[RMDB]
RNA sequence: GGGAACGACUCGAGUAGAGUCGAAAACUGAUGCCGACGUUUCUGUCGAAAAGGUAGCCUGAUAUGCACGCUUAUCUUCACUGUCUUUCCCACUCGCCGCUGGUGGGGUAUGUCGACCCGGCGCAAGGUCUGCAGCACAAUUCGUUGUGCUGCAGACAAAAGAAACAACAACAACAAC
Reactivity to DMS in 0.01 (KOAc 150mM, MgCl2 10mM, bicine 150mM(pH8.5), 24C), signal-to-noise 1, nucleotides 027 to 126: c040u000g010a090u000g010c090c060g020a120c080g000u000u020u040c040u000g090u000c020g000a050a040a120a100g000g020u000a080g000c020c090u000g010a120u010a060u020g070c070a080c050g000c030u010u000a050u000c030u000u010c130a100c070u000g000u000c040u000u020u000c000c030c000a050c100u020c100g010c040c030g010c120u000g010g010u000g030g030g000g000u000a030u000g000u030c030g000a050c050c010c010g020g020c020g020c290a090a090g010
Reactivity to 2A3 in 0.01 (KOAc 150mM, MgCl2 10mM, bicine 150mM(pH8.5), 24C), signal-to-noise 1, nucleotides 027 to 126: c000u020g010a040u140g040c060c010g000a100c030g030u000u020u110c050u070g000u060c030g080a050a050a000a010g110g000u010a010g070c010c000u090g060a110u080a040u080g120c080a010c080g090c000u090u070a010u080c000u070u050c040a050c080u070g040u030c000u010u090u110c000c000c000a010c000u000c050g060c030c020g050c090u030g000g000u060g040g020g000g020u020a040u140g150u000c020g020a030c000c020c020g080g000c030g010c020a140a000g100
This 177-nucleotide RNA was probed chemically with DMS and 2A3. Values cover nucleotides 27 to 126. The reactions ran in a buffer of 150 mM KOAc, 10 mM MgCl2 and 150 mM bicine (pH 8.5), at 24 C. The 2A3 profile rests on 1,122 reads. It was measured as part of the RMDB library OK2TRN.